[RMDB]
The record gives the reactivity of an RNA of 177 nucleotides to DMS and 2A3.
For DMS, 1,712 sequencing reads were counted.
DMS adducts were read by reverse transcription with MarathonRT.

RNA sequence: GGGAACGACUCGAGUAGAGUCGAAAAACUGAAAUUUUGUCAUUUUCAUCUUCUGUCUUGAUUUUUUUCAUUUAGACUCAUGUUUAUGUUUUUAUGCUUUAAGUCAUGUUUUCAGUUACUAAAUAGCCAUAGCAUCGAGUUUCGACUCGAUGCUAUGAAAAGAAACAACAACAACAAC
Reactivity to DMS in 0.01 (KOAc 150mM, MgCl2 10mM, bicine 150mM(pH8.5), 24C), signal-to-noise 2, nucleotides 027 to 126: a040c030u000g000a000a040a080u000u010u000u010g010u010c050a070u000u000u010u000c020a050u000c120u000u010c060u000g010u010c010u000u010g000a000u010u000u020u010u000u000u010c070a030u010u000u000a060g010a050c030u010c110a040u010g010u010u020u010a040u000g010u000u000u000u000u000a010u000g000c050u000u000u010a020a060g010u020c050a030u000g000u010u000u000u000c030a020g010u000u000a130c080u000a020a070a090u010a110g030c200
Reactivity to 2A3 in 0.01 (KOAc 150mM, MgCl2 10mM, bicine 150mM(pH8.5), 24C), signal-to-noise 1, nucleotides 027 to 126: a000c010u000g020a080a040a040u180u140u100u050g060u050c010a030u080u080u050u060c010a050u000c050u300u090c030u020g100u020c050u010u110g000a160u100u060u040u000u040u120u060c010a030u020u020u090a030g010a000c000u020c100a030u080g080u040u200u060a030u010g020u000u000u150u100u090a020u040g000c020u060u110u120a110a090g050u090c000a000u020g010u000u050u050u000c000a000g010u040u000a050c030u030a020a090a190u150a060g030c010